Structure probing data (DMS and 2A3) for a 177-nucleotide construct. Source: RMDB library TTRINS, as collected in RNAgym. For DMS, 2,953 sequencing reads were counted. 2A3 adducts were read by reverse transcription with SuperScript II with manganese.
[RMDB]
RNA sequence: GGGAACGACUCGAGUAGAGUCGAAAAGAUAUGGACUUUCGAAGAACACGGGAGGUAUGAAGCUGCCUAGGGUUCGGAAACGAACCCUAGGCAGGGUACCGAAGAACGUGGGAGAAAGUCCUAAGUCGUAAUAGUUACUGUUCGCAGUAACUAUUACAAAAGAAACAACAACAACAAC
Reactivity to DMS in 0.01 (KOAc 150mM, MgCl2 10mM, bicine 150mM(pH8.5), 24C), signal-to-noise 3, nucleotides 027 to 126: g010a100u000a300u020g000g010a010c000u000u000u000c000g000a130a180g030a200a270c000a010c010g000g010g010a170g010g000u000a000u020g010a190a210g010c000u010g000c000c000u000a010g000g030g050u010u000c010g000g010a060a060a220c000g030a000a000c000c000c000u000a000g020g010c000a010g000g010g010u000a000c000c000g020a050a110g000a110a160c000g020u000g000g000g000a170g000a000a020a010g000u000c000c000u010a010a040g010u010c110
Reactivity to 2A3 in 0.01 (KOAc 150mM, MgCl2 10mM, bicine 150mM(pH8.5), 24C), signal-to-noise 2, nucleotides 027 to 126: g050a060u160a110u280g000g000a000c020u030u030u030c110g240a300a110g050a180a020c010a000c000g030g030g010a080g020g010u000a020u110g270a300a100g200c020u000g000c050c010u010a010g000g050g040u030u060c030g000g000a060a150a010c030g000a030a010c000c070c030u000a000g010g000c010a020g000g000g000u000a010c000c010g010a040a000g020a060a020c000g000u010g000g020g000a060g000a000a000a000g000u010c000c000u000a000a010g030u070c050